Source: RMDB library M2PK50, as collected in RNAgym. An RNA of 177 nucleotides, treated with DMS and 2A3 and read out base by base. In probing experiments dimethyl sulfate is read out at A N1 and C N3, which are open when not base-paired. For DMS, 1,750 sequencing reads were counted. 2A3 is a SHAPE reagent: it acylates the 2'-hydroxyl of flexible nucleotides of all four kinds. The reactions ran in a buffer of 150 mM KOAc, 10 mM MgCl2 and 150 mM bicine (pH 8.5), at 24 C.

[RMDB]
RNA sequence: GGGAACGACUCGAGUAGAGUCGAAAACACACAAGGUUCGCCUUGUGUGCAAGAAUAGACGAAUACUACCGUAGAAGUUUUCAGGUCACAUAACUACGGAAAUGGCGUUCUGCUUCGGCAGAACGAAGAAGGGGAUACGAUUCGUCGUAUCCCCUUCAAAAGAAACAACAACAACAAC
Reactivity to DMS in 0.01 (KOAc 150mM, MgCl2 10mM, bicine 150mM(pH8.5), 24C), signal-to-noise 2, nucleotides 027 to 126: c020a000c000a020c000a000a010g000g020u000u000c300g000c030c010u000u000g010u000g020u000g000c060a060a050g000a120a080u000a150g000a060c030g000a070a110u000a100c040u000a110c060c030g020u000a000g000a060a170g010u000u000u000u010c100a100g000g010u010c080a080c110a040u010a080a100c010u000a040c050g000g010a070a080a090u000g020g020c010g000u000u000c000u000g010c010u000u010c170g020g000c020a010g000a010a000c010g020a010a040
Reactivity to 2A3 in 0.01 (KOAc 150mM, MgCl2 10mM, bicine 150mM(pH8.5), 24C), signal-to-noise 2, nucleotides 027 to 126: c000a000c000a000c000a010a000g040g020u060u050c130g130c030c000u000u000g000u010g020u000g020c000a040a020g040a060a080u080a100g060a030c010g000a060a040u100a190c050u030a090c000c030g010u040a000g030a210a040g030u060u030u120u010c090a050g020g140u090c060a040c010a110u190a140a040c020u040a010c030g010g060a050a080a060u110g090g030c000g000u000u010c000u000g000c000u030u020c020g120g000c000a000g020a000a000c010g000a010a040